[RMDB]
RNA sequence: GGGAACGACUCGAGUAGAGUCGAAAAUCAAAAUUGUUACGUCAAGGCACCAGUGUGUAUGUUUAUACACAGUGCAUACGACUUGACUGCUGCCGGCAUAGUUGAUUGUAUGGUUGCCGCCGACGCAAGUCAGGCACUUCUUCGGAAGUGCCUGACUAAAAGAAACAACAACAACAAC
Reactivity to DMS in 0.01 (KOAc 150mM, MgCl2 10mM, bicine 150mM(pH8.5), 24C), signal-to-noise 2, nucleotides 027 to 126: u000c050a070a090a110a160u010u030g020u000u000a150c100g050u000c010a080a210g030g010c000a040c290c130a090g010u000g020u010g030u010a010u000g010u010u010u010a000u000a000c000a010c010a100g010u010g030c030a050u000a140c160g000a060c070u010u000g000a040c050u000g000c060u000g010c030c080g010g010c050a080u010a060g000u000u000g020a100u000u000g000u000a030u010g010g010u020u000g000c010c020g000c160c150g010a010c030g000c100a050